Structure probing data (2A3 and DMS) for a 177-nucleotide construct.
RNA sequence: GGGAACGACUCGAGUAGAGUCGAAAAGAUAUGGACACGCCAAGGGAGAACCGAUUCGGAAACGAAUCGAAGUUCAUCGAUCUUGGGCGUGUCCUAAGUCAAAACGCGUGAUGUUCGCAUCACGCGAGAAUCUUAUAACGUUCGCGUUAUAAGAUUCAAAAGAAACAACAACAACAAC
Reactivity to 2A3 in 0.01 (KOAc 150mM, MgCl2 10mM, bicine 150mM(pH8.5), 24C), signal-to-noise 7, nucleotides 027 to 126: g010a000u020a010u090g000g000a000c000a000c010g020c000c010a020a010g100g020g030a290g010a020a000c010c000g010a010u010u010c000g000g010a030a010a010c000g000a000a010u000c000g020a100a040g000u010u020c070a130u300c140g150a120u050c010u020u030g100g050g000c000g000u000g000u000c000c000u000a000a000g000u000c000a020a010a060a100c020g000c000g000u000g010a000u010g050u100u140c300g010c120a000u000c000a000c000g010c010g000a010
Reactivity to DMS in 0.01 (KOAc 150mM, MgCl2 10mM, bicine 150mM(pH8.5), 24C), signal-to-noise 6, nucleotides 027 to 126: g010a020u000a200u010g000g000a010c010a000c000g010c000c010a020a020g030g010g010a100g010a020a010c010c000g010a010u000u010c000g020g000a050a030a080c000g010a010a000u000c000g000a070a120g020u000u000c010a300u010c240g000a070u000c000u000u000g020g010g020c010g030u000g000u000c000c000u000a000a080g000u000c020a110a070a120a200c020g010c000g010u000g010a020u000g010u000u020c300g030c010a010u010c000a010c010g020c000g000a030